[RMDB]
Record summary:
The data come from the RNA Mapping Database (RMDB), library RFMREP. An RNA of 177 nucleotides, treated with 2A3 and DMS and read out base by base. The RNA was probed in 150 mM KOAc, 10 mM MgCl2 and 150 mM bicine (pH 8.5) at 24 C. Values cover nucleotides 27 to 126. For 2A3, 13,270 sequencing reads were counted.

RNA sequence: GGGAACGACUCGAGUAGAGUCGAAAAGUCUGAGGUCAUUUUCCGUGAGGGAGGCGCGCCAACGCGUGCAGCAGUCGCACCAGAAACCAAGAGCCUCUGUGCUUAUGCCAGGAGGAGGGCCUUGCCCGACACAGUGAAAGUUCGCUUUCACUGUGUCAAAAGAAACAACAACAACAAC
Reactivity to 2A3 in 0.01 (KOAc 150mM, MgCl2 10mM, bicine 150mM(pH8.5), 24C), signal-to-noise 6, nucleotides 027 to 126: g060u030c120u120g030a020g010g010u020c030a060u010u050u060u010c030c050g050u100g050a110g050g060g030a040g020g040c010g000c010g000c020c050a120a050c090g010c010g030u040g010c010a020g000c010a020g080u120c040g000c020a030c020c040a030g070a090a080a020c040c030a150a040g030a030g130c010c000u040c040u050g050u080g040c000u140u110a060u210g030c030c030a030g010g020a010g010g020a030g000g020g000c000c010u050u100g040c000c010c000
Reactivity to DMS in 0.01 (KOAc 150mM, MgCl2 10mM, bicine 150mM(pH8.5), 24C), signal-to-noise 6, nucleotides 027 to 126: g010u010c110u010g000a040g010g010u000c030a060u000u000u010u000c020c020g000u000g020a130g020g000g000a080g010g010c020g000c040g020c030c100a090a090c200g000c060g030u000g010c040a070g010c030a070g000u000c130g000c020a040c070c090a080g010a070a070a080c110c080a080a130g010a150g000c030c020u000c030u000g010u000g010c030u000u010a090u010g000c030c050a090g010g000a060g010g010a070g010g000g000c020c040u000u000g000c020c010c030